Chemical mapping of a 177-nucleotide RNA with 2A3 and DMS.
2A3 adducts were read by reverse transcription with SuperScript II with manganese.
For 2A3, 1,441 sequencing reads were counted.
Values cover nucleotides 27 to 126.
DMS (dimethyl sulfate) methylates the pairing face of unpaired adenines and cytosines.
[RMDB]
RNA sequence: GGGAACGACUCGAGUAGAGUCGAAAAAGACGGACGAUUUCCCCACAACGCUGGAGACAUCCUGGAAGGGGAAAGGAGAAGGUGGAAAAGAAGGGGCGGGCCUCCCGAUCCGAGGGGCCCAACUACCGAUUAAUUGAAACUUCGGUUUCAAUUAAUCAAAAGAAACAACAACAACAAC
Reactivity to 2A3 in 0.01 (KOAc 150mM, MgCl2 10mM, bicine 150mM(pH8.5), 24C), signal-to-noise 1, nucleotides 027 to 126: a000g060a000c060g020g010a020c020g040a060u030u030u000c000c010c070c010a000c000a030a070c040g060c040u030g030g000a000g020a040c050a120u060c020c020u020g000g060a080a110g040g000g000g100a020a000a030g040g020a070g020a090a010g040g010u080g020g070a070a100a030a090g080a030a030g000g010g040g030c050g030g000g000c000c000u050c000c010c000g010a050u020c050c030g000a040g020g050g010g010c000c000c010a010a030c010u050a010c020c030
Reactivity to DMS in 0.01 (KOAc 150mM, MgCl2 10mM, bicine 150mM(pH8.5), 24C), signal-to-noise 2, nucleotides 027 to 126: a080g050a070c060g000g010a070c090g000a170u000u000u000c000c000c010c080a090c070a120a110c100g000c090u010g010g010a040g020a150c190a080u000c040c030u020g010g030a070a080g000g010g010g000a020a000a040g000g000a090g000a120a050g010g040u000g000g000a090a060a060a050g000a080a080g000g000g010g000c230g010g000g010c000c010u010c010c000c010g000a120u010c150c070g020a070g000g000g020g000c010c010c010a010a040c090u020a120c240c100